[RMDB]
Chemical mapping of a 177-nucleotide RNA with 2A3 and DMS.
For DMS the reverse transcriptase was MarathonRT.
For 2A3, 2,180 sequencing reads were counted.

RNA sequence: GGGAACGACUCGAGUAGAGUCGAAAAUUGCCUGAUUAAGUCUAUUGCUUGUUGACCAGAACCCACCCUUGUAGGAUGAUAUUUUUGGCCUUAGAUAAUCAUGGGUUUCCAACCAUUAACGUACCAAGACUUAACAGAUGUUCGCAUCUGUUAAGUCAAAAGAAACAACAACAACAAC
Reactivity to 2A3 in 0.01 (KOAc 150mM, MgCl2 10mM, bicine 150mM(pH8.5), 24C), signal-to-noise 2, nucleotides 027 to 126: u110u040g050c000c000u020g040a050u080u070a120a040g090u020c020u060a090u050u130g030c050u090u130g040u010u060g090a070c020c010a030g010a030a060c000c010c000a020c010c010c010u020u080g120u100a040g050g030a050u030g020a030u030a110u130u090u030u060u050g050g000c000c000u020u030a030g010a080u060a120a020u080c020a060u070g060g000g040u030u040u000c030c010a030a030c000c000a020u100u080a050a050c070g010u040a040c030c000a090a040
Reactivity to DMS in 0.01 (KOAc 150mM, MgCl2 10mM, bicine 150mM(pH8.5), 24C), signal-to-noise 3, nucleotides 027 to 126: u010u010g010c000c010u000g000a080u000u010a110a130g020u000c050u010a080u000u000g010c090u010u010g000u000u010g020a040c040c030a060g010a070a070c300c060c030a050c040c030c020u000u000g010u000a060g010g010a100u000g000a040u000a050u000u000u000u000u000g030g000c030c010u000u000a030g010a050u000a040a050u000c050a040u010g020g000g030u000u000u000c050c030a120a120c120c070a080u000u020a010a070c120g010u030a160c110c110a090a110
For DMS, 2,743 sequencing reads were counted. The RNA was probed in 150 mM KOAc, 10 mM MgCl2 and 150 mM bicine (pH 8.5) at 24 C.